The record gives the reactivity of an RNA of 177 nucleotides to 2A3 and DMS.
Reactivities are given for positions 27 through 126.
The reactions ran in a buffer of 150 mM KOAc, 10 mM MgCl2 and 150 mM bicine (pH 8.5), at 24 C.
For DMS the reverse transcriptase was MarathonRT.

RNA sequence: GGGAACGACUCGAGUAGAGUCGAAAAGCUCUAGGAGACUAGAGCGAUACGUUAGAGAGGUCGUGGCAUGACUAACGGAUAGCCAGGUACGAGGUUGCCAGAGGACAUAGCUAUAGCUAUGUCCAAAGUGCUAUCAUACCUUCGGGUAUGAUAGCACAAAAGAAACAACAACAACAAC
Reactivity to 2A3 in 0.01 (KOAc 150mM, MgCl2 10mM, bicine 150mM(pH8.5), 24C), signal-to-noise 1, nucleotides 027 to 126: g000c000u000c000u000a000g010g020a070g050a010c000u000a000g000a000g010c050g000a020u010a030c020g070u070u020a000g000a030g020a080g040g020u020c000g010u020g020g110c030a040u180g050a050c010u030a050a000c000g000g070a030u050a050g150c000c010a030g000g050u060a030c030g100a120g000g040u030u020g000c000c010a060g020a050g030g000a000c000a000u000a000g000c030u110a030u000a300g000c010u000a000u010g000u000c000c000a000a020a000
Reactivity to DMS in 0.01 (KOAc 150mM, MgCl2 10mM, bicine 150mM(pH8.5), 24C), signal-to-noise 2, nucleotides 027 to 126: g000c000u000c010u000a010g010g000a170g000a210c000u000a030g000a040g020c020g000a020u000a070c110g000u010u000a010g000a240g000a070g000g000u000c080g030u000g000g000c010a100u010g010a070c030u020a020a080c060g000g000a060u050a080g000c010c010a040g000g120u010a150c160g000a120g100g010u000u000g010c020c010a070g020a170g000g010a000c010a000u000a010g030c000u010a160u080a170g000c010u000a000u000g030u000c000c000a000a010a050